The record gives the reactivity of an RNA of 177 nucleotides to DMS and 2A3.
For 2A3, 2,703 sequencing reads were counted.
Conditions: 150 mM KOAc, 10 mM MgCl2 and 150 mM bicine (pH 8.5), 24 C.
As a SHAPE reagent, 2A3 marks flexible, mostly unpaired nucleotides at the ribose 2'-OH.
RNA sequence: GGGAACGACUCGAGUAGAGUCGAAAAGAGAUGAGUCUCAACACAUCUGAAUGUGUUGUACAUACCGUUCUGACUACGAUAAGGAUGGUGUGUACAGUUACACAACGAGACUCAUCGUAGUCAGAUAGCUAGAGCUUGAUUUCGAUCAAGCUCUAGCAAAAGAAACAACAACAACAAC
Reactivity to DMS in 0.01 (KOAc 150mM, MgCl2 10mM, bicine 150mM(pH8.5), 24C), signal-to-noise 4, nucleotides 027 to 126: g010a150g020a000u010g010a040g010u000c000u000c000a140a050c090a060c060a060u010c210u020g030a130a090u010g020u000g000u030u000g030u000a010c010a000u010a000c010c010g030u000u000c010u000g000a150c230u050a180c300g020a120u000a110a040g000g000a000u000g000g000u010g010u000g000u010a000c020a060g000u000u050a070c230a100c200a040a040c140g010a010g000a020c000u000c000a000u000c000g010u040a060g000u010c060a060g000a100u020a060
Reactivity to 2A3 in 0.01 (KOAc 150mM, MgCl2 10mM, bicine 150mM(pH8.5), 24C), signal-to-noise 3, nucleotides 027 to 126: g130a000g000a000u020g000a000g030u000c000u000c010a010a010c040a000c000a070u080c080u170g130a140a070u010g020u000g000u000u020g000u010a000c020a000u010a000c000c000g040u010u000c000u000g090a100c080u110a050c130g080a090u030a070a010g000g000a010u000g000g000u000g000u000g000u000a020c000a030g000u050u190a070c040a010c050a170a030c100g010a000g000a000c000u000c000a000u000c000g000u000a000g080u020c000a000g000a080u140a020